The record gives the reactivity of an RNA of 177 nucleotides to DMS. The RNA was probed in 150 mM KOAc, 10 mM MgCl2 and 150 mM bicine (pH 8.5) at 24 C. Reactivities are given for positions 27 through 126. The DMS profile rests on 1,339 reads. It was measured as part of the RMDB library OK2TRN.
[RMDB]
RNA sequence: GGGAACGACUCGAGUAGAGUCGAAAAACUUUAAACAGGCAGUGAGUGGGGGUUGGAGGCAGGCACGGGCUCACUGGUGUUUGGUUUUGUUUUCUGAGGUCCAACCCAAGCCCUUUGACUUUAGACGUAGCCUAAACCAUUUCGAUGGUUUAGGCUAAAAAGAAACAACAACAACAAC
Reactivity to DMS in 0.01 (KOAc 150mM, MgCl2 10mM, bicine 150mM(pH8.5), 24C), signal-to-noise 1, nucleotides 027 to 126: a050c040u000u010u020a040a060a090c000a080g000g040c020a030g030u000g010a010g010u010g020g020g010g000g000u000u000g010g010a070g010g010c120a060g000g020c120a160c150g010g010g000c020u020c010a030c020u000g020g040u010g010u000u000u000g010g010u010u000u000u000g010u000u010u000u000c010u010g000a070g030g000u000c020c050a030a080c040c010c010a090a110g000c040c020c090u000u040u000g010a050c070u000u000u000a050g010a090c290g010